[RMDB]
RNA sequence: GGGAACGACUCGAGUAGAGUCGAAAAGAUAUGGACGUAUAGGCUCGUACUGUGUCGGAAACGACAUGUACACCAAGCCUAUGACGUCCUAAGUCAAAGAGACUGAGCGGUUCGCCGCUCAGUCUCACCAAACGAGUCAGUUCGCUGACUCGUUUGGAAAAGAAACAACAACAACAAC
Reactivity to DMS in 0.01 (KOAc 150mM, MgCl2 10mM, bicine 150mM(pH8.5), 24C), signal-to-noise 2, nucleotides 027 to 126: g020a010u010a140u000g010g000a010c000g010u000a020u000a000g010g040c010u030c160g000u000a010c000u010g050u000g000u000c000g020g000a040a060a090c000g020a000c000a020u000g000u030a010c000a090c300c300a100a080g000c010c000u000a000u020g000a030c000g010u000c000c010u000a000a070g020u010c020a100a110a090g000a030g000a010c000u000g000a000g070c000g000g030u000u030c300g010c000c010g020c000u000c000a020g000u000c000u010c020a030